[RMDB]
RNA sequence: GGGAACGACUCGAGUAGAGUCGAAAACUGGCACAGGGGGGCCGGCUCGUGGUCAUCGGCAUGAUGUCCCAGUACAGCGACGGCUGGGCGCCCUCCAAGGUGGCGCCGGGCCUGCCAGAGCUGCUGCUCCCACUACCUACUUCGGUAGGUAGUGGGAAAAAGAAACAACAACAACAAC
Reactivity to DMS in 0.01 (KOAc 150mM, MgCl2 10mM, bicine 150mM(pH8.5), 24C), signal-to-noise 1, nucleotides 027 to 126: c010u010g020g000c040a030c080a010g000g010g000g000g010g010c010c050g000g020c010u000c010g030u000g050g020u000c030a030u000c010g000g050c150a150u010g000a060u000g020u000c030c000c020a090g030u010a110c090a000g010c020g000a110c160g010g010c000u010g000g000g030c000g000c020c000c040u000c110c090a080a110g000g010u000g000g020c000g010c040c010g000g010g010c010c010u040g000c010c010a110g010a220g010c000u000g000c090u000g010c160
The record gives the reactivity of an RNA of 177 nucleotides to DMS.
Values cover nucleotides 27 to 126.
The RNA was probed in 150 mM KOAc, 10 mM MgCl2 and 150 mM bicine (pH 8.5) at 24 C.
Values are in units of 0.01, from 0 to 300, in steps of 10.